[RMDB]
RNA sequence: GGGAACGACUCGAGUAGAGUCGAAAAUUACUGGUGGUGUCUUUUUUGGCUGUUGCCGACCAGGUCGCUACAGCCUGAGCUGUUACGUCAGCAGCCUGCGCCACACCCAUGCCGGUAAACACCGUUACGUUCAUGUAAAGUUCGCUUUACAUGAACGAAAAGAAACAACAACAACAAC
Reactivity to DMS in 0.01 (KOAc 150mM, MgCl2 10mM, bicine 150mM(pH8.5), 24C), signal-to-noise 6, nucleotides 027 to 126: u000u000a020c080u000g010g030u000g010g040u010g000u000c020u000u000u010u010u000u010g010g010c000u000g000u000u000g010c080c010g000a090c070c070a080g030g010u000c070g020c070u010a080c150a120g000c030c040u000g010a140g010c070u000g010u010u000a130c110g020u000c050a030g010c010a020g010c020c030u000g000c130g000c060c140a040c040a070c030c030c300a080u000g000c070c010g010g010u010a030a040a090c150a130c020c010g000u000u010a180
Reactivity to 2A3 in 0.01 (KOAc 150mM, MgCl2 10mM, bicine 150mM(pH8.5), 24C), signal-to-noise 5, nucleotides 027 to 126: u090u040a040c040u070g050g010u040g020g010u020g070u160c100u060u250u130u050u150u120g010g000c010u000g020u020u010g040c060c020g000a010c020c040a040g070g030u060c030g040c150u120a110c060a050g000c000c020u010g010a040g030c050u030g060u170u130a060c050g040u020c050a000g000c010a010g000c030c010u020g010c030g000c000c000a010c000a020c000c010c010a020u130g050c020c010g030g000u040a090a110a030c070a040c020c010g020u040u060a060